[RMDB]
RNA sequence: GGGAACGACUCGAGUAGAGUCGAAAAUCUAUUUGGGGACGUGGUGGAAUUGGUAGACACGACGGACUUAAAAUCCGUUGCCUAGUGAUAGUGCGUGAGGGUUCAAGUCCCUCCGUCCCCAGUUGAAGGCCAGAAUAAAGUUCGCUUUAUUCUGGCCAAAAGAAACAACAACAACAAC
Reactivity to DMS in 0.01 (KOAc 150mM, MgCl2 10mM, bicine 150mM(pH8.5), 24C), signal-to-noise 2, nucleotides 027 to 126: u000c030u000a090u000u000u000g040g020g000g020a000c020g000u000g000g020u000g000g000a040a000u000u010g040g010u010a010g000a300c000a010c020g020a030c040g010g010a010c040u000u030a040a080a100a300u010c010c010g040u000u000g000c000c000u000a010g020u000g000a250u000a010g010u010g020c020g010u000g030a000g010g000g010u000u000c020a020a300g000u000c000c000c000u000c010c000g000u000c000c000c010c010a010g000u000u000g000a130a050

The record gives the reactivity of an RNA of 177 nucleotides to DMS. The RNA was probed in 150 mM KOAc, 10 mM MgCl2 and 150 mM bicine (pH 8.5) at 24 C.